[RMDB]
RNA sequence: GGGAACGACUCGAGUAGAGUCGAAAAUGGACUUUUUACAAUUCCUACUUAUCCGGUUUUAACGCUGUUUUAUUGGCGCAAAGGUUUACGGAUAAACAACUAAUAAUUAAACCUUUUGUGUGCGAAAAUUGGACGUUUAGGUUCGCCUAAACGUCAAUCAAUACCUCGGUUUCGACCGAGGUAUUGAAAAAGAAACAACAACAACAAC
Reactivity to DMS in 0.01 (KOAc 150mM, MgCl2 10mM, bicine 150mM(pH8.5), 24C), signal-to-noise 1, nucleotides 027 to 156: u000g020g050a170c090u000u000u000u000u000a130c090a150a150u010u010c010c010u000a110c080u010u000a000u000c020c000g000g000u010u010u010u010a180a050c000g050c000u020g040u000u000u000u010a170u050u010g000g000c000g010c040a040a050a020g040g010u000u000u000a140c050g000g020a060u000a010a020a140c010a090a170c100u000a070a090u020a050a150u020u010a000a000a020c010c000u000u000u000u000g000u010g000u000g050c030g010a040a120a070a220u000u000g000g000a040c000g020u010u000u010a000g030g000u000u000c300g070c000c010u000a010a010a010c010g030u000c000a000a010
Reactivity to 2A3 in 0.01 (KOAc 150mM, MgCl2 10mM, bicine 150mM(pH8.5), 24C), signal-to-noise 2, nucleotides 027 to 156: u070g040g050a080c120u050u090u050u140u090a090c070a040a000u050u040c000c000u020a100c020u060u040a000u010c000c000g010g030u010u010u000u060a080a050c020g000c010u010g150u190u130u140u220a120u130u290g040g010c030g010c000a010a010a010g000g000u000u000u000a000c000g010g000a020u000a010a050a000c030a020a000c050u130a150a090u070a170a040u140u180a040a000a000c000c000u010u010u140u030g050u000g010u020g050c060g070a070a030a090a240u090u080g080g010a000c000g020u020u020u000a010g090g000u030u040c200g070c010c000u000a000a000a000c000g010u000c000a010a000

This 207-nucleotide RNA was probed chemically with DMS and 2A3. The DMS profile rests on 2,168 reads. DMS adducts were read by reverse transcription with MarathonRT. It was measured as part of the RMDB library M2RFPK.